Structure probing data (DMS and 2A3) for a 177-nucleotide construct.
RNA sequence: GGGAACGACUCGAGUAGAGUCGAAAACGAACCGCAGGCUUGGGAGAGCCGUGGGGUUCGAAAACGAUCCGGCGGCGGCCUGGGAGGGCCUUCACGCGGGUCCUCAAGGGGAGAACCACCGAUGGAGCAAUAAAACACCGUUCGCGGUGUUUUAUUGAAAAGAAACAACAACAACAAC
Reactivity to DMS in 0.01 (KOAc 150mM, MgCl2 10mM, bicine 150mM(pH8.5), 24C), signal-to-noise 6, nucleotides 027 to 126: c020g000a010a010c000c000g000c030a180g000g000c010u000u010g010g050g010a220g000a020g010c010c000g000u020g010g010g010g020u000u000c010g000a050a070a080a100c140g010a110u000c000c010g010g000c040g010g010c050g010g010c000c000u010g020g030g000a020g010g010g010c000c000u000u000c120a110c180g010c170g000g000g020u000c000c000u000c010a090a120g000g000g000g000a090g010a120a300c020c000a050c020c010g010a080u020g010g000a050g010
Reactivity to 2A3 in 0.01 (KOAc 150mM, MgCl2 10mM, bicine 150mM(pH8.5), 24C), signal-to-noise 3, nucleotides 027 to 126: c010g000a000a000c010c010g170c170a010g000g010c000u040u050g060g090g010a100g000a000g030c000c010g010u060g000g090g000g000u010u000c000g000a030a010a000a020c060g030a060u020c000c000g020g000c000g000g000c010g010g050c020c000u090g030g190g010a010g010g010g000c010c000u050u070c100a080c080g080c080g010g000g000u000c000c000u000c010a050a060g020g000g000g000a130g050a080a070c010c010a020c010c010g010a020u050g010g010a030g030